[RMDB]
This 177-nucleotide RNA was probed chemically with DMS and 2A3. For 2A3, 2,221 sequencing reads were counted. Reactivities are given for positions 27 through 126. Values are in units of 0.01, from 0 to 300, in steps of 10. For DMS, 1,376 sequencing reads were counted. For 2A3 the reverse transcriptase was SuperScript II with manganese.
RNA sequence: GGGAACGACUCGAGUAGAGUCGAAAAUCACCGAUCUUUUUCUACAAGCUUGCGAUGCGGGUCGGGAUGCCGAUGGUUGGAAGAUGGUCGCCCUGGCGUCGAAUACGCGCGAGCGCAUGAGCUCACCGCUAGGCGAAGGAUUCGUCCUUCGCCUAGCAAAAGAAACAACAACAACAAC
Reactivity to DMS in 0.01 (KOAc 150mM, MgCl2 10mM, bicine 150mM(pH8.5), 24C), signal-to-noise 1, nucleotides 027 to 126: u000c010a100c010c050g020a040u000c010u000u000u000u000u010c020u020a130c120a080a060g000c000u000u000g000c120g010a100u020g000c000g030g020g030u000c020g000g070g010a000u020g000c000c050g020a130u030g000g000u000u000g000g010a080a190g000a050u000g050g000u000c080g020c000c060c030u000g030g040c010g000u000c010g020a050a080u030a100c080g000c040g000c200g060a100g000c070g000c070a190u030g010a220g040c040u050c010a110c240c200
Reactivity to 2A3 in 0.01 (KOAc 150mM, MgCl2 10mM, bicine 150mM(pH8.5), 24C), signal-to-noise 4, nucleotides 027 to 126: u100c030a100c080c030g040a040u080c030u030u140u050u050u050c040u110a130c080a080a040g030c030u080u080g010c050g090a120u090g010c050g000g040g000u030c070g000g000g060a030u030g010c060c020g030a120u100g040g090u100u110g040g040a070a030g050a120u130g070g070u090c040g000c000c020c020u040g020g010c020g000u090c030g030a130a090u120a150c090g000c000g010c010g050a030g010c020g030c030a090u140g070a010g010c010u020c020a100c020c050